[RMDB]
RNA sequence: GGGAACGACUCGAGUAGAGUCGAAAAGAGAACGUACGCGUUCUCACCACAGGCGUUCGCGCCUGUGGACAGAUGCUACGGCAUCUGAACAGUAACGUGAGUUACUGAACAAGCUCUUCGGAGCUUGACUAACUGCGUACGCGCAGUUAGACUACCACUUCGGUGGUAGACCGGUGGAUAGGCGGGUGUAGUGCUUCUCCAACACACUUCCACUGAUGCUGUUUAUAUCUAAUGAUAUAAACAAUGCCUCCUUUAAAGGAGAUGCUAAUCGGCGGUUCGCCGCCGAUAAAAGAAACAACAACAACAAC
Reactivity to 2A3 in 0.01 (KOAc 150mM, MgCl2 10mM, bicine 150mM(pH8.5), 24C), signal-to-noise 5, nucleotides 027 to 266: g000a000g000a000a000c010g010u070a030c250g000c000g150u010u000c000u000c000a030c000c000a000c000a000g000g020c020g050u120u150c230g050c000g010c140c000u000g000u000g000g000a000c000a000g000a000u000g000c000u030a040c270g130g000c000a000u000c000u000g020a100a030c000a000g000u000a000a000c040g070u080g080a090g020u050u010a000c000u010g040a040a040c010a000a000g000c010u000c010u070u140c260g110g000a000g000c000u000u010g010a010c000u000a000a000c000u000g000c000g010u060a060c250g010c000g000c140a010g000u000u000a000g000a030c000u010a010c000c000a010c010u050u100c200g140g010u010g000g000u000a010g010a020c040c040g040g020u020g010g020a060u090a180g100g030c130g060g120g000u050g010u050a250g040u030g090c100u050u070c020u000c020c010a050a000c030a000c010a010c000u000u030c000c000a010c030u020g050a090u150g060c050u010g000u000u000u000a000u000a000u000c040u120a240a170u300g000a010u000a000u000a000a000a000c000a010a010u040g010c010c000u090c010c030u220u210u200a170a190a040g020g000a020g000a020u120g010c000u070a110
Reactivity to DMS in 0.01 (KOAc 150mM, MgCl2 10mM, bicine 150mM(pH8.5), 24C), signal-to-noise 2, nucleotides 027 to 266: g000a030g000a020a010c010g010u000a070c230g040c010g010u000u000c000u000c020a250c020c000a000c000a000g000g010c010g030u020u030c180g030c000g030c000c010u000g010u010g010g010a190c030a010g000a010u010g010c000u010a090c200g030g030c000a000u000c000u000g000a210a250c030a010g000u000a000a000c000g000u030g000a210g020u010u000a000c000u000g000a210a240c020a020a000g000c020u000c000u000u000c230g030g000a000g000c000u000u010g000a300c010u000a000a010c000u000g000c000g010u020a070c260g020c030g000c000a000g000u000u000a000g000a300c040u000a010c000c000a030c000u000u040c170g020g020u000g000g000u000a010g000a070c300c030g100g020u000g000g010a090u010a060g010g010c100g010g000g020u000g000u010a040g010u010g000c080u000u000c010u010c040c040a150a050c050a020c040a060c020u000u000c000c030a020c030u000g010a090u000g010c090u000g000u000u010u000a000u000a000u000c000u020a120a160u020g000a010u000a010u000a000a000a010c000a030a080u000g000c010c040u000c020c040u000u010u010a120a090a090g000g000a020g000a030u030g000c040u000a080